[RMDB]
RNA sequence: GGGAACGACUCGAGUAGAGUCGAAAACCAGGCCCUACGGGGCGCAGCAGGCGCGAAAACUCUACAAUGCAGGCAACUGCGAUAGGGGGACAUCGAGUGGCAUCCACCUUGGGUGCCUGUCCAACCGUCAUACGCUUCGUUUCGACGAAGCGUAUGAAAAAGAAACAACAACAACAAC
Reactivity to 2A3 in 0.01 (KOAc 150mM, MgCl2 10mM, bicine 150mM(pH8.5), 24C), signal-to-noise 5, nucleotides 027 to 126: c000c000a020g040g060c000c000c010u050a070c220g030g000g000g000c020g000c010a000g040c000a020g020g020c000g000c010g080a040a020a060a080c020u030c000u060a060c070a120a130u210g020c010a010g070g000c040a040a060c040u000g010c010g020a010u070a070g000g020g000g000g010a020c000a020u100c100g090a060g070u090g020g000c000a000u010c000c000a130c070c150u140u120g000g020g000u000g000c000c000u000g000u000c000c000a030a030c030c010g000
Reactivity to DMS in 0.01 (KOAc 150mM, MgCl2 10mM, bicine 150mM(pH8.5), 24C), signal-to-noise 5, nucleotides 027 to 126: c000c000a160g010g020c000c000c010u000a120c100g030g010g020g030c020g000c120a060g000c060a090g010g010c070g000c050g000a070a070a120a150c030u010c010u010a060c100a100a150u030g010c010a010g000g010c270a110a170c010u020g010c020g010a100u010a040g010g000g020g000g000a060c010a040u010c100g020a110g030u020g000g000c000a010u000c000c000a220c240c160u040u030g010g010g010u000g010c000c000u000g000u020c010c010a090a080c060c080g000